RNA sequence: GGGAACGACUCGAGUAGAGUCGAAAACAUUGCUUGGGACUGGGAGAGGUAGGAGGUACUCGGGGGGUAGGGGUGAAAUCCUGUAAUCCUCCGGGGACCACCGGUGGCGAAGGCGUCCUACCAGAACCUUGGAAAUUGACUUCGGUCAAUUUCCAAGAAAAGAAACAACAACAACAAC
Reactivity to 2A3 in 0.01 (KOAc 150mM, MgCl2 10mM, bicine 150mM(pH8.5), 24C), signal-to-noise 1, nucleotides 027 to 126: c030a040u100u270g000c040u110u060g060g000g070a100c080u050g020g040g030a040g030a010g090g020u000a000g050g040a020g050g000u020a010c020u050c020g010g000g000g000g050g010u020a050g010g000g000g000u070g040a000a040a000u050c000c000u030g070u100a010a010u030c000c020u000c000c000g000g010g010g000a000c000c000a000c020c020g010g040u000g000g000c020g120a110a000g030g040c030g060u000c000c030u000a100c070c000a020g060a150a050c000
Reactivity to DMS in 0.01 (KOAc 150mM, MgCl2 10mM, bicine 150mM(pH8.5), 24C), signal-to-noise 1, nucleotides 027 to 126: c020a040u010u020g000c130u000u000g020g030g000a230c270u000g000g000g050a040g050a070g000g000u020a020g000g000a120g030g060u020a020c000u040c010g000g060g010g020g000g000u000a020g000g000g000g030u000g000a030a040a010u000c030c000u010g000u150a010a010u000c000c000u000c000c000g040g000g020g010a010c000c000a050c070c000g000g010u020g010g000c110g000a150a040g000g000c040g000u020c000c020u030a030c170c070a120g010a120a100c040